[RMDB]
RNA sequence: GGGAACGACUCGAGUAGAGUCGAAAAAGGUAGUGAUAUGGAAGUGGAACGCGACAUUGAGGAAUGUGUCGGAAACGACACAAUUCCAAUGAUGUGUCACAGUGACGAAGUUCCUAAGUCGAUGAAACCGAAAGACUAUGUUCGCAUAGUCUUUCGGAAAAGAAACAACAACAACAAC
Reactivity to 2A3 in 0.01 (KOAc 150mM, MgCl2 10mM, bicine 150mM(pH8.5), 24C), signal-to-noise 2, nucleotides 027 to 126: a000g240g020u120a050g020u050g160a110u050a060u220g030g030a040a050g110u110g080g050a050a020c050g010c030g080a000c010a030u020u080g040a040g000g000a010a020u020g020u010g000u020c000g000g000a010a060a010c000g000a000c010a010c070a080a220u000u040c000c000a000a090u080g000a010u070g020u000g010u050c020a030c070a120g050u110g070a030c050g130a180a070g110u000u030c000c000u020a110a000g080u040c040g020a170u130g130a190a040a050
Reactivity to DMS in 0.01 (KOAc 150mM, MgCl2 10mM, bicine 150mM(pH8.5), 24C), signal-to-noise 3, nucleotides 027 to 126: a040g000g010u010a090g030u000g010a040u000a200u010g010g000a070a080g030u000g020g000a150a030c070g000c100g010a010c000a010u000u000g000a300g010g000a030a010u000g010u000g000u010c010g020g000a060a060a160c010g020a010c000a020c000a020a030u000u000c010c010a090a130u010g000a090u020g000u010g000u000c010a090c050a120g030u000g000a110c050g000a110a060g000u000u000c000c000u000a050a100g010u000c010g010a090u010g000a070a070a110
Description
The record gives the reactivity of an RNA of 177 nucleotides to 2A3 and DMS. It was measured as part of the RMDB library TTRDEL. The RNA was probed in 150 mM KOAc, 10 mM MgCl2 and 150 mM bicine (pH 8.5) at 24 C.